[RMDB]
RNA sequence: GGGAACGACUCGAGUAGAGUCGAAAAGUAACAGCGAUGCGCCGUGUGGAACCUGUCGCAGUUGCCAGCUAUUUACUUCCAGUGGCCAUCCGGAUUUAUAUCAUCUAUCUCCUGAGGAUGAGAGGGGCUGUAAACAUAGCUUCGGCUAUGUUUACAGAAAAGAAACAACAACAACAAC
Reactivity to DMS in 0.01 (KOAc 150mM, MgCl2 10mM, bicine 150mM(pH8.5), 24C), signal-to-noise 5, nucleotides 027 to 126: g000u010a050a090c060a120g000c140g000a030u000g000c180g010c010c020g000u000g020u010g010g010a050a070c260c050u010g000u010c110g020c060a130g010u010u010g020c060c060a060g020c130u010a070u000u000u010a100c200u010u000c020c010a080g000u000g010g000c020c010a030u000c030c020g010g010a110u010u000u000a070u000a100u010c020a020u000c020u010a090u010c070u000c000c020u000g000a180g000g000a030u000g010a030g020a080g000g000g010g010
Reactivity to 2A3 in 0.01 (KOAc 150mM, MgCl2 10mM, bicine 150mM(pH8.5), 24C), signal-to-noise 3, nucleotides 027 to 126: g050u040a050a060c050a030g010c060g100a030u040g020c060g010c050c020g110u200g080u100g110g040a020a050c040c000u060g080u150c040g010c070a080g060u200u160g090c020c010a000g020c020u090a090u100u150u110a060c040u030u030c010c000a040g040u060g040g000c020c000a000u030c020c010g010g000a010u040u150u060a140u040a030u060c020a020u000c010u030a040u040c020u020c030c020u040g040a050g010g020a020u030g000a020g050a020g020g000g000g000